[RMDB]
RNA sequence: GGGAACGACUCGAGUAGAGUCGAAAAGCCCUUUAAACGCCCUCUAGGCGGAGACGGAAGACAAUUGACUCUUGGCACGGACGGAAGAGGAAUGCCGUCUGCUCACCUUAGUUAACACGAGAUUUUAGAUGGAGUAAUCAUUCGUGAUUACUCCAUCAAAAGAAACAACAACAACAAC
Reactivity to 2A3 in 0.01 (KOAc 150mM, MgCl2 10mM, bicine 150mM(pH8.5), 24C), signal-to-noise 5, nucleotides 027 to 126: g010c020c000c000u000u100u040a110a080a020c020g000c020c010c000u090c110u100a060g030g000c030g030g000a030g010a010c080g000g040a070a030g080a060c060a070a110u050u090g050a070c000u030c010u050u030g010g030c040a010c080g040g030a020c020g020g050a040a020g090a070g190g140a060a010u130g030c000c000g000u000c000u000g030c020u020c030a040c000c010u030u020a020g050u040u060a080a020c070a010c140g090a120g040a290u060u120u090u150a020
Reactivity to DMS in 0.01 (KOAc 150mM, MgCl2 10mM, bicine 150mM(pH8.5), 24C), signal-to-noise 6, nucleotides 027 to 126: g010c010c000c010u000u000u020a070a110a180c080g000c030c010c110u000c150u010a090g010g020c040g030g010a080g000a090c050g020g000a070a050g020a080c120a050a140u010u000g000a110c030u000c090u000u010g010g000c120a120c090g010g010a040c060g010g010a050a050g000a130g010g000a110a100u010g010c020c020g000u000c010u000g000c110u000c110a080c030c020u000u000a050g010u010u000a060a090c160a110c120g000a100g010a110u010u000u000u000a130